[RMDB]
RNA sequence: GGGAACGACUCGAGUAGAGUCGAAAAAGCAUGACCUCAACCUCAGGUUGAAGGAGGACACUAUGAUUAUUCAAGUCAGCCCAGCCGGCAGUAUGGAUCUACUGUCACAACUCGAAGUAGAACGUCAGCUACCUAAAAUGUUCGCAUUUUAGGUAGCAAAAGAAACAACAACAACAAC
Reactivity to 2A3 in 0.01 (KOAc 150mM, MgCl2 10mM, bicine 150mM(pH8.5), 24C), signal-to-noise 6, nucleotides 027 to 126: a010g100c100a090u090g050a050c000c000u000c000a010a010c010c030u190c150a110g050g020u030u020g040a080a060g040g010a030g020g070a020c010a010c080u110a070u170g050a060u130u120a090u110u250c060a070a030g050u020c000a020g030c010c010c000a010g050c040c030g000g000c010a010g000u050a040u130g090g050a040u040c010u030a010c000u020g020u060c020a020c020a070a080c040u060c060g060a060a010g010u080a020g010a080a020c020g070u050c030a030
Reactivity to DMS in 0.01 (KOAc 150mM, MgCl2 10mM, bicine 150mM(pH8.5), 24C), signal-to-noise 5, nucleotides 027 to 126: a070g030c110a110u000g000a120c030c030u000c030a040a030c010c030u000c160a120g030g020u010u000g010a090a050g030g000a150g010g010a070c080a060c080u020a070u000g000a070u000u000a100u020u010c100a040a070g010u000c050a080g010c030c020c020a090g010c090c080g010g010c020a020g010u000a020u000g010g020a160u010c090u010a020c020u000g010u000c040a110c130a070a070c070u000c080g000a060a020g000u000a050g000a040a120c140g010u010c120a090